This 177-nucleotide RNA was probed chemically with 2A3 and DMS. For 2A3 the reverse transcriptase was SuperScript II with manganese. Reactivities are given for positions 27 through 126. The 2A3 profile rests on 983 reads.
RNA sequence: GGGAACGACUCGAGUAGAGUCGAAAAUGGGGUGAUGGGUGAAAGUGCUCACACUUGGCUUCUCUCCCUCCAGGUAUAUGACCGGGUAUCAGUGGAAGCUGUGUUGCCAAUGGACAAACGACUGGACGGUAGCAACGUAGUUCGCUACGUUGCUACCAAAAGAAACAACAACAACAAC
Reactivity to 2A3 in 0.01 (KOAc 150mM, MgCl2 10mM, bicine 150mM(pH8.5), 24C), signal-to-noise 1, nucleotides 027 to 126: u140g000g030g030g000u060g060a200u070g030g070g000u100g060a250a030a020g140u090g070c030u000c030a040c000a010c000u020u000g020g050c000u040u000c010u050c010u040c000c000c020u020c070c000a000g020g120u170a100u020a040u230g110a040c000c000g040g030g000u040a050u160c030a000g000u030g080g010a030a070g000c010u040g040u040g020u050u070g050c030c060a090a160u150g060g010a040c020a040a090a000c010g090a040c000u000g050g010a020c090
Reactivity to DMS in 0.01 (KOAc 150mM, MgCl2 10mM, bicine 150mM(pH8.5), 24C), signal-to-noise 2, nucleotides 027 to 126: u000g000g000g000g010u000g010a080u000g000g020g040u000g060a050a130a110g010u000g000c090u010c050a050c050a040c070u000u000g010g030c050u010u000c060u000c020u000c020c020c010u000c020c040a000g010g020u000a080u010a120u000g010a050c030c010g010g000g000u000a040u000c040a050g030u000g030g000a150a050g000c040u000g010u000g000u000u000g020c020c010a040a050u010g000g020a120c100a010a090a110c260g000a070c060u000g030g010a150c150